Overview
This 177-nucleotide RNA was probed chemically with 2A3 and DMS. Reactivities are given for positions 27 through 126. DMS adducts were read by reverse transcription with MarathonRT. It was measured as part of the RMDB library OK1LIB. Conditions: 150 mM KOAc, 10 mM MgCl2 and 150 mM bicine (pH 8.5), 24 C.
RNA sequence: GGGAACGACUCGAGUAGAGUCGAAAAUUUACACACAAAUUUCACAUUAUUUUGCACGCGGUUUAGGCUUCUUUGUCGUAACGAAGUCUUCUUCAUCCGAAAACGGCGGCGUCUGAGGGCGCGACGGCUCUUACGCGGAAUUCGUUCCGCGUAAGAGAAAAGAAACAACAACAACAAC
Reactivity to 2A3 in 0.01 (KOAc 150mM, MgCl2 10mM, bicine 150mM(pH8.5), 24C), signal-to-noise 7, nucleotides 027 to 126: u050u050u140a090c080a000c010a000c030a040a080a080u090u160u080c090a080c030a070u060u170a110u090u250u110u150g050c050a020c060g060c010g060g020u050u050u130a020g020g000c000u000u000c020u030u060u110g110u070c050g060u050a080a020c040g010a030a010g020u010c000u040u020c000u060u080c030a130u050c020c050g080a060a020a020a010c010g020g010c000g010g020c010g010u000c020u050g090a180g020g050g060c010g030c020g030a080c010g070g020
Reactivity to DMS in 0.01 (KOAc 150mM, MgCl2 10mM, bicine 150mM(pH8.5), 24C), signal-to-noise 3, nucleotides 027 to 126: u020u020u050a080c130a090c090a100c090a030a080a060u010u000u020c100a070c120a080u030u030a050u010u000u010u000g000c030a020c070g000c050g000g000u010u010u000a040g010g030c000u000u000c000u000u020u020g000u030c080g000u000a060a070c230g000a010a090g030u010c010u000u010c060u000u020c030a070u050c060c030g000a050a060a060a060c070g000g020c050g000g000c040g020u000c010u040g010a110g000g030g030c070g000c010g000a050c080g020g010